[RMDB]
RNA sequence: GGGAACGACUCGAGUAGAGUCGAAAAGCUAUAGGAAUACCGUUGAUGCAUUACACUAAACAUUUGAAAGAUGUAAUACGUCAUUUGGUGUUCCUAUAGUUACCCGUUCAACUUUUAUUCUUCUUCUAGAAAUCAUGCAUUUCGAUGCAUGAUUUCUAAAAGAAACAACAACAACAAC
Reactivity to 2A3 in 0.01 (KOAc 150mM, MgCl2 10mM, bicine 150mM(pH8.5), 24C), signal-to-noise 5, nucleotides 027 to 126: g000c010u000a000u000a000g000g000a000a000u000a010c030c000g000u000u010g000a000u000g000c020a000u000u020a010c000a000c020u110a140a240a020c130a260u120u170u300g240a240a190a010g060a100u040g010u000a000a020u000a010c000g000u000c010a020u030u020u300g000g000u000g000u000u000c010c000u000a000u000a000g000u000u000a000c000c000c000g010u150u090c060a070a110c090u060u090u180u190a160u190u100c030u060u000c000u010u000c010u000